[RMDB]
RNA sequence: GGGAACGACUCGAGUAGAGUCGAAAAUCCUCACGUUUCGACGUGAGGAGAACUCUUGCAAGGGAAGGGAACCCUCGGGAAGGGCUCCCAAGGCGAUCUCAACAAGGGCCAAAUUCGUUUGGCCCAAGGUUAUCAAUACAUUCGUGUAUUGAUAACCAAAAGAAACAACAACAACAAC
Reactivity to DMS in 0.01 (KOAc 150mM, MgCl2 10mM, bicine 150mM(pH8.5), 24C), signal-to-noise 7, nucleotides 027 to 126: u000c000c000u000c010a010c000g020u000u000u000c180g020a020c000g020u000g010a010g000g000a020g010a070a080c030u000c020u000u010g040c080a080a230g000g000g010a110a180g010g010g000a030a040c020c020c010u000c090g020g000g020a160a090g010g000g010c040u000c000c000c010a030a040g010g000c030g000a100u000c020u000c050a110a100c280a100a120g010g010g000c000c000a000a010a050u000u010c190g000u000u000u000g010g000c000c000c000a000a000
Reactivity to 2A3 in 0.01 (KOAc 150mM, MgCl2 10mM, bicine 150mM(pH8.5), 24C), signal-to-noise 8, nucleotides 027 to 126: u010c000c000u000c000a000c000g020u020u070u110c220g130a020c010g000u000g000a000g000g000a010g000a010a010c010u010c020u060u150g030c050a090a100g050g010g060a080a080g050g000g010a040a040c010c030c000u020c050g180g020g050a070a010g020g020g000c020u010c000c000c000a000a000g030g000c010g030a070u010c020u010c040a020a150c040a080a150g000g000g000c000c010a000a010a010u080u090c190g050u030u000u000g010g000c000c000c000a000a000